[RMDB]
RNA sequence: GGGAACGACUCGAGUAGAGUCGAAAACAAAGGUGCUGCGGCGAUGGGCUCUCAGGUGGCAGGGAGUGUACUCAGCUCGGGCGCCUUCACGUCAGCAGGUGUGGCCGCGACCACAGCGGAUGGAAACCGGUAGUCGACAAUUCGUUGUCGACUACCGAAAAGAAACAACAACAACAAC
Reactivity to DMS in 0.01 (KOAc 150mM, MgCl2 10mM, bicine 150mM(pH8.5), 24C), signal-to-noise 1, nucleotides 027 to 126: c080a110a040a060g040g000u000g030c000u000g000c150g040g010c100g040a160u000g000g000g000c030u000c020u010c040a020g010g000u000g000g000c140a040g010g080g000a030g000u000g000u000a030c130u040c010a170g030c030u000c020g000g000g000c000g000c000c020u000u010c100a100c120g000u010c080a000g030c010a000g030g030u000g010u010g000g000c050c090g000c180g050a130c040c000a040c050a090g010c030g020g010a180u030g000g020a020a070a200c150
Reactivity to 2A3 in 0.01 (KOAc 150mM, MgCl2 10mM, bicine 150mM(pH8.5), 24C), signal-to-noise 2, nucleotides 027 to 126: c120a000a120a000g010g020u090g040c000u160g050c060g030g040c040g120a110u110g010g010g060c000u000c000u000c030a040g060g130u030g100g000c060a080g020g040g020a040g030u100g040u120a120c060u140c040a000g030c010u020c040g020g010g000c000g030c020c000u020u010c020a030c010g040u030c030a020g000c010a000g010g140u060g020u060g100g040c020c020g060c050g050a070c000c020a020c040a060g000c030g000g000a040u080g050g110a090a110a060c010